Conditions: 150 mM KOAc, 10 mM MgCl2 and 150 mM bicine (pH 8.5), 24 C. Structure probing data (DMS and 2A3) for a 177-nucleotide construct. For DMS, 2,256 sequencing reads were counted.
RNA sequence: GGGAACGACUCGAGUAGAGUCGAAAAGCGUUCACUUUUGGUUCGCUACACUUUGUCGACGGUGAACUUCUUAAUGGGGAACCGUCGUUUAAAAACGUUCACCGUAGCGGUCGGGAGGCGGCCACGCGCCCUCUAAGGGAUUCGUCCCUUAGAGGGCAAAAGAAACAACAACAACAAC
Reactivity to DMS in 0.01 (KOAc 150mM, MgCl2 10mM, bicine 150mM(pH8.5), 24C), signal-to-noise 3, nucleotides 027 to 126: g000c030g000u000u010c010a120c060u000u000u000u000g010g010u000u010c000g030c000u000a050c100a170c200u000u000u000g020u000c030g030a000c020g010g030u000g020a290a180c000u000u000c090u000u000a130a070u030g010g020g010g020a300a040c010c020g020u000c020g010u000u000u020a030a060a040a070a170c110g010u000u000c040a130c040c040g020u000a040g000c040g000g010u000c060g000g000g000a080g000g010c120g000g000c050c080a020c050g000c100
Reactivity to 2A3 in 0.01 (KOAc 150mM, MgCl2 10mM, bicine 150mM(pH8.5), 24C), signal-to-noise 3, nucleotides 027 to 126: g000c000g040u070u030c060a100c110u120u020u070u110g090g000u170u260c020g000c020u040a020c050a030c060u110u120u180g060u090c010g000a010c000g000g000u020g030a080a070c020u020u030c020u050u240a210a210u260g020g000g000g030a040a010c020c030g020u010c000g010u010u060u030a010a010a000a000a020c010g030u060u060c090a090c150c040g000u010a020g030c000g050g030u010c020g060g010g000a030g070g010c070g010g060c020c000a020c030g020c010
Reactivities are rounded to 0.1 and cut off at 0 and 3.